[RMDB]
RNA sequence: GGGAACGACUCGAGUAGAGUCGAAAAGCCCGAAAGUUCGCUUUCGGGCAAAAGAAAGCUCCUGCGCGAGCAAAGCACACGCAGAAAAACAGUGCAAAAGCAAAAGUACCGUGUUCGCACGGUACAACCACUCAUUGUACUUCGGUACAAUGAGUGGAAAAGAAACAACAACAACAAC
Reactivity to 2A3 in 0.01 (KOAc 150mM, MgCl2 10mM, bicine 150mM(pH8.5), 24C), signal-to-noise 1, nucleotides 027 to 126: g020c060c000c000g000a010a010a000g030u110u150c220g020c190u010u000u000c000g000g000g010c000a010a030a000a010g000a020a080a020g050c010u030c020c040u090g000c050g010c020g050a170g010c080a130a070a020g010c010a000c000a030c030g060c020a020g200a100a170a000a010a010c050a020g030u020g050c030a000a030a040a060g000c020a000a140a050a060g000u010a000c000c000g010u010g040u020u050c070g000c070a010c010g000g000u000a000c000a000a000